[RMDB]
RNA sequence: GGGAACGACUCGAGUAGAGUCGAAAACUAGUAAGAACCUAUUUCUUGUUUAACCUGACAUCACAAAGCAAAUAGGCCAAGUGCUAACAUGUGCAUAUUUAACCUAUGAACCUCUACAUUAAGUACUAAGAAUACCAAACAUUUGGCUGAUUGCAGAGCGCUAGUUUUAGUUCGCUAAAACUAGCGCAAAAGAAACAACAACAACAAC
Reactivity to 2A3 in 0.01 (KOAc 150mM, MgCl2 10mM, bicine 150mM(pH8.5), 24C), signal-to-noise 1, nucleotides 027 to 156: c020u000a000g080u100a030a030g080a170a020c020c040u010a150u060u080u020c020u010u010g050u060u090u030a060a070c030c030u000g090a060c000a110u110c080a070c050a130a000a190g110c010a000a060a210u120a110g020g000c000c060a030a060g000u020g020c000u050a050a160c010a240u090g040u050g120c020a000u000a070u070u120u100a080a030c020c020u110a070u050g000a020a020c030c090u030c090u040a060c040a070u180u060a110a030g000u010a020c000u010a100a000g030a160a050u020a150c030c090a050a040a140c030a020u060u110u000g000g000c000u000g040a030u000u080g030c000a000g140a000